[RMDB]
RNA sequence: GGGAACGACUCGAGUAGAGUCGAAAACGCACGUUAUUGGCAAAAAGAUUAUCCAACUGGAAAAUCUGUGAAGCAAUGGGCUCAAACUACUUGGGCUCCACCACAAUUCACAGCUCUUCGAGAAAGGUCUCUCUGACUCCUUCGGGAGUCAGAGAGAAAAAGAAACAACAACAACAAC
Reactivity to 2A3 in 0.01 (KOAc 150mM, MgCl2 10mM, bicine 150mM(pH8.5), 24C), signal-to-noise 1, nucleotides 027 to 126: c030g030c020a110c050g070u140u210a130u250u140g000g000c010a000a120a000a120a000g210a110u210u190a000u050c030c020a090a130c090u020g000g010a050a010a010a010u000c000u000g000u000g000a010a010g020c060a020a130u010g000g030g080c000u000c000a040a070a210c140u300a010c060u170u000g000g000g000c050u150c030c000a030c030c000a020c050a130a170u000u000c000a040c000a000g000c030u000c000u050u000c000g090a050g000a030a070a050g050g000